[RMDB]
An RNA of 207 nucleotides, treated with 2A3 and read out base by base.
Source: RMDB library ARCHII, as collected in RNAgym.
RNA sequence: GGGAACGACUCGAGUAGAGUCGAAAACUCACUUCAAUGACGGUGAUAGAUACUACAUAUCACUCCUGCUUAGAGGGUCAUCUAAGCUAAACCAUGUGAAUAUAACCUUUCGGGCCUCGAGAGACGGAAGUGAGUUCAAUUCUCACCAACUCCACCAGUAGUCUAGCUUGUUCGCAAGCUAGACUACAAAAGAAACAACAACAACAAC
Reactivity to 2A3 in 0.01 (KOAc 150mM, MgCl2 10mM, bicine 150mM(pH8.5), 24C), signal-to-noise 2, nucleotides 027 to 156: c000u010c010a010c010u000u050c090a160a200u240g060a090c110g000g000u020g010a030u000a010g050a030u160a170c050u050a050c150a100u040a020u000c010a000c010u040c000c050u080g000c000u000u000a010g000a000g000g020g060u120c070a010u020c050u010a010a000g000c030u030a060a070a000c070c000a030u200g040u020g120a150a040u230a000u020a140a050c010c000u000u040u080c010g230g000g000c000c110u130c030g080a090g000a010g020a060c110g080g000a000a020g000u000g000a000g000u000u000c010a000a000u040u040c000u000c040a040c010c040a080a060c060u110c100c040a090c030c000a040

For 2A3 the reverse transcriptase was SuperScript II with manganese.